[RMDB]
RNA sequence: GGGAACGACUCGAGUAGAGUCGAAAAUUAGAUACAAUCCAACGAGGAUUCUAAUUUCUCCACGUCUUUGGUAAUAAGGUUUGGCAAAGAUGUGGAAAAAUUGGAAUCCUCAUUCGAUUGGUGGGUAGCUACCUAUACUGUUCGCAGUAUAGGUAGCAAAAGAAACAACAACAACAAC
Reactivity to 2A3 in 0.01 (KOAc 150mM, MgCl2 10mM, bicine 150mM(pH8.5), 24C), signal-to-noise 2, nucleotides 027 to 126: u080u030a050g030a050u120a230c000a030a000u020c010c000a010a020c010g000a010g010g000a010u020u000c000u000a000a000u020u020u000c020u020c010c010a000c000g000u010c010u080u080u010g230g190u160a050a050u100a180a170g270g050u050u060u050g050g010c000a010a010a000g010a010u010g000u010g000g030a010a000a000a000a000u010u000g000g000a000a000u000c000c000u000c000a000u000u000c000g030a010u020u020g070g030u070g050g080g060u020a080
Reactivity to DMS in 0.01 (KOAc 150mM, MgCl2 10mM, bicine 150mM(pH8.5), 24C), signal-to-noise 2, nucleotides 027 to 126: u000u010a100g010a200u010a060c010a010a000u010c000c120a020a020c060g000a010g000g000a010u000u000c010u000a010a000u000u000u000c030u000c000c010a010c000g020u000c000u000u000u000g000g000u000a030a050u020a160a190g030g010u000u000u000g000g010c000a000a010a000g010a010u000g020u010g000g010a000a000a000a020a000u000u000g000g010a010a010u000c000c000u000c010a000u000u000c300g000a020u000u000g000g020u000g010g010g010u000a110